Structure probing data (DMS) for a 177-nucleotide construct. The reactions ran in a buffer of 150 mM KOAc, 10 mM MgCl2 and 150 mM bicine (pH 8.5), at 24 C. It was measured as part of the RMDB library TTRINS. Values cover nucleotides 27 to 126.
RNA sequence: GGGAACGACUCGAGUAGAGUCGAAAAGAUAUGGAGCACUUCGCAAUGACGGUGUAGUUGCAUCGUAACGUCGGAAACGACGUUACGAUGGCACUCUACACUAAGACAGCGGGAGUGCUCCUAAGUCCUAAUCCCCAUAGUUCGCUAUGGGGAUUAGAAAAGAAACAACAACAACAAC
Reactivity to DMS in 0.01 (KOAc 150mM, MgCl2 10mM, bicine 150mM(pH8.5), 24C), signal-to-noise 2, nucleotides 027 to 126: g000a070u010a300u000g010g010a030g010c010a020c010u000u000c010g020c060a100a290u010g000a150c280g070g010u010g020u000a020g030u010u000g000c000a020u000c020g000u000a000a000c000g020u000c000g000g010a100a090a290c000g040a010c010g030u000u000a030c000g010a000u000g000g000c020a010c300u000c020u000a000c000a000c000u000a300a110g000a200c140a080g020c240g000g020g000a010g030u010g000c000u000c000c000u000a030a070g030u000c030